[RMDB]
RNA sequence: GGGAACGACUCGAGUAGAGUCGAAAAGAUAUGGAGUGCGGGAUGCAAUUCCUUGGACCUCGGAAACGAGCUAGGAAUUGAACUACAUCAUGCACUCCUAAGUCAAAGCGGCGGUUCGCCGCCGCAACUAUCUCUACCUCUUCGGAGGUAGAGAUAGAAAAGAAACAACAACAACAAC
Reactivity to DMS in 0.01 (KOAc 150mM, MgCl2 10mM, bicine 150mM(pH8.5), 24C), signal-to-noise 3, nucleotides 027 to 126: g010a040u000a300u020g000g000a030g040u000g000c010g010g020g010a020u010g010c010a000a040u000u000c000c000u000u000g040g010a150c300c010u000c000g010g000a060a090a160c010g010a010g000c050u000a000g010g010a000a010u000u000g000a030a040c100u030a300c030a020u000c000a060u000g000c000a010c000u000c000c000u000a000a030g010u010c030a070a120a110g000c010g010g000c000g000g000u000u010c250g030c020c000g010c000c010g010c010a040a070
Reactivity to 2A3 in 0.01 (KOAc 150mM, MgCl2 10mM, bicine 150mM(pH8.5), 24C), signal-to-noise 2, nucleotides 027 to 126: g010a040u080a060u170g000g010a000g000u010g010c030g000g030g000a000u000g080c020a020a010u000u010c010c020u030u060g190g120a300c050c000u010c010g030g000a040a100a060c010g000a010g020c040u030a000g000g000a000a010u020u000g000a050a080c090u180a040c100a000u010c000a020u030g000c000a000c000u000c000c000u000a010a000g010u010c030a010a110a140g000c000g010g000c020g000g080u030u100c260g060c100c010g000c000c000g000c010a000a010